The record gives the reactivity of an RNA of 177 nucleotides to 2A3 and DMS. Values are in units of 0.01, from 0 to 300, in steps of 10.
[RMDB]
RNA sequence: GGGAACGACUCGAGUAGAGUCGAAAAUCAGUGAUGCUAAGCGCCCUGAAGCCGCCUUCGAACCUUCGGGUUCUCCGGUGUGUGGAUGCGCGUGAACCGAUCUGGUAGUAGCCAAGCGAUGGGGUGACAAUCGCAUGAGAUUCGUCUCAUGCGAUUGAAAAGAAACAACAACAACAAC
Reactivity to 2A3 in 0.01 (KOAc 150mM, MgCl2 10mM, bicine 150mM(pH8.5), 24C), signal-to-noise 5, nucleotides 027 to 126: u020c000a000g020u010g020a010u020g000c010u010a020a000g010c000g010c020c040c000u010g010a000a000g010c000c000g000c000c000u010u020c020g000a000a000c000c000u040u090c180g090g010g000u000u000c010u010c000c000g030g010u030g060u110g000u000g000g000a000u000g010c000g000c000g000u000g000a000a020c000c000g000a010u010c000u000g050g000u000a050g020u040a010g020c020c030a070a010g060c060g160a110u160g000g010g000g030u030g030a020
Reactivity to DMS in 0.01 (KOAc 150mM, MgCl2 10mM, bicine 150mM(pH8.5), 24C), signal-to-noise 8, nucleotides 027 to 126: u000c010a000g020u000g010a300u040g000c010u000a050a300g000c000g000c020c060c010u000g000a300a130g000c020c000g000c000c000u010u010c300g000a020a010c000c010u010u050c180g010g000g020u000u000c010u000c300c260g000g000u000g000u050g040u000g000g000a120u000g000c300g000c000g000u000g000a070a140c300c010g000a140u000c000u000g010g020u000a060g010u010a110g010c000c010a050a060g000c080g000a080u010g000g000g000g010u000g000a170